[RMDB]
RNA sequence: GGGAACGACUCGAGUAGAGUCGAAAAGUACUAUGCCCGGCAUUAUUGAUGCAUGCUCCACCUCCCACUCCUUAAUAGUUGCUUUGAAGUUUCCUUUCGGUGGGUUCUGCAGCGUCUUUAUCAGAAACGAAUCAACCUCAUUCGUGAGGUUGAUUCGAAAAGAAACAACAACAACAAC
Reactivity to DMS in 0.01 (KOAc 150mM, MgCl2 10mM, bicine 150mM(pH8.5), 24C), signal-to-noise 1, nucleotides 027 to 126: g020u010a140c100u000a010u020g000c030c020c010g020g030c120a140u020u000a060u020u000g010a040u000g000c060a130u010g040c010u010c030c010a100c040c000u000c030c020c010a110c160u000c040c030u000u020a030a090u000a080g000u000u010g030c040u000u000u000g010a050a260g000u000u000u000c000c010u000u000u010c060g030g060u000g020g000g020u000u000c140u000g020c060a030g000c030g020u000c030u010u000u000a050u020c070a080g010a110a090a110